[RMDB]
The record gives the reactivity of an RNA of 177 nucleotides to DMS and 2A3.
The data come from the RNA Mapping Database (RMDB), library OK2TST.

RNA sequence: GGGAACGACUCGAGUAGAGUCGAAAAGUGCUGACCCGUCACAGGACAGAAUGAUUAAAAGAAGCCUUUUCAGCUUCUGGCCAACUCUGUUUCAGUAUGAGGUCAUCCUGGAGUCACCGGCCAGCGGGCUACCCUUAUAUUUCGAUAUAAGGGUAGCAAAAGAAACAACAACAACAAC
Reactivity to DMS in 0.01 (KOAc 150mM, MgCl2 10mM, bicine 150mM(pH8.5), 24C), signal-to-noise 9, nucleotides 027 to 126: g020u000g020c130u000g010a030c010c000c030g010u010c100a070c110a180g000g000a040c020a020g000a050a090u010g010a130u010u010a070a140a110a020g010a020a010g010c000c050u000u000u010u010c280a200g000c000u000u000c000u000g010g020c210c120a050a090c080u000c010u000g000u010u000u010c040a120g010u010a040u000g000a190g000g000u000c020a040u000c030c020u000g010g000a110g000u000c060a060c050c050g000g000c020c020a060g010c220g010g010
Reactivity to 2A3 in 0.01 (KOAc 150mM, MgCl2 10mM, bicine 150mM(pH8.5), 24C), signal-to-noise 7, nucleotides 027 to 126: g070u070g020c030u010g010a020c000c010c010g030u040c040a050c010a060g020g030a010c010a020g080a040a080u160g040a150u130u180a080a040a010a020g010a010a000g000c000c000u150u190u120u160c030a000g000c000u000u000c000u010g010g020c030c010a030a030c030u000c000u040g100u060u160u160c030a050g020u100a060u050g070a120g050g010u030c010a020u040c010c010u020g030g020a030g040u060c020a020c050c010g010g020c010c010a020g040c080g030g110
DMS adducts were read by reverse transcription with MarathonRT.